[RMDB]
RNA sequence: GGGAACGACUCGAGUAGAGUCGAAAAGAAUGCCCAUUCGUGGGCAUUCCACCGCAGCGAAGCGGAAAGGCAUUUUAUGCGUACGCUGGCGAAAGCCUAAAAAAGCUCCACUUUUCGAAGUGGAGAAGUAAUUUGCAUGAUUCGUCAUGCAAAUUACAAAAGAAACAACAACAACAAC
Reactivity to 2A3 in 0.01 (KOAc 150mM, MgCl2 10mM, bicine 150mM(pH8.5), 24C), signal-to-noise 3, nucleotides 027 to 126: g000a000a000u010g000c000c000c000a000u020u080c240g080u030g000g000g010c000a000u000u000c000c000a030c000c020g010c020a050g040c040g130a160a000g000c000g000g060a110a050a020g150g000c020a030u070u050u040u240a080u150g000c000g030u040a040c030g010c040u020g010g010c020g020a090a010a010g000c010c010u160a120a120a030a020a020a010g040c000u000c000c000a010c000u040u040u070u130c230g050a010a010g000u010g000g000a000g000a000a000
Reactivity to DMS in 0.01 (KOAc 150mM, MgCl2 10mM, bicine 150mM(pH8.5), 24C), signal-to-noise 3, nucleotides 027 to 126: g020a010a000u000g010c000c000c000a030u000u020c200g030u000g020g000g010c000a000u000u010c000c070a240c080c040g010c130a080g020c080g010a150a120g010c000g020g010a040a070a080g000g000c040a060u010u010u000u000a040u010g010c030g000u000a100c050g000c030u000g020g040c020g000a100a080a190g000c020c030u000a000a010a080a070a080a150g010c000u000c000c010a000c000u000u000u000u010c150g010a010a010g010u000g000g000a020g000a010a040
Structure probing data (2A3 and DMS) for a 177-nucleotide construct. Conditions: 150 mM KOAc, 10 mM MgCl2 and 150 mM bicine (pH 8.5), 24 C. Source: RMDB library M2PK50, as collected in RNAgym.